Background:
This 177-nucleotide RNA was probed chemically with DMS. For DMS the reverse transcriptase was MarathonRT. Reactivities are given for positions 27 through 126. Conditions: 150 mM KOAc, 10 mM MgCl2 and 150 mM bicine (pH 8.5), 24 C.
[RMDB]
RNA sequence: GGGAACGACUCGAGUAGAGUCGAAAAUCGUAACGCCCGUAUACCGGAACCGCUGCCGCCACCGAGGUGUCGACCUGUUCGAACCCGGGCUGAAAUCGCGGAUCGUUGGGGGUCAACGCCGCCAGGGUACAUGCUAGUCGUUCGCGACUAGCAUGUAAAAAGAAACAACAACAACAAC
Reactivity to DMS in 0.01 (KOAc 150mM, MgCl2 10mM, bicine 150mM(pH8.5), 24C), signal-to-noise 1, nucleotides 027 to 126: u010c080g040u010a160a170c220g000c010c010c030g000u010a150u000a140c070c020g030g030a060a050c060c040g060c070u010g020c060c050g010c070c030a070c030c030g000a120g030g010u000g020u000c010g000a000c030c110u000g010u000u000c020g060a060a130c030c000c010g000g010g000c040u020g070a080a080a130u000c100g030c020g000g010a050u000c030g020u020u000g000g020g000g000g000u000c040a080a040c010g040c030c040g000c050c000a050g000g020g000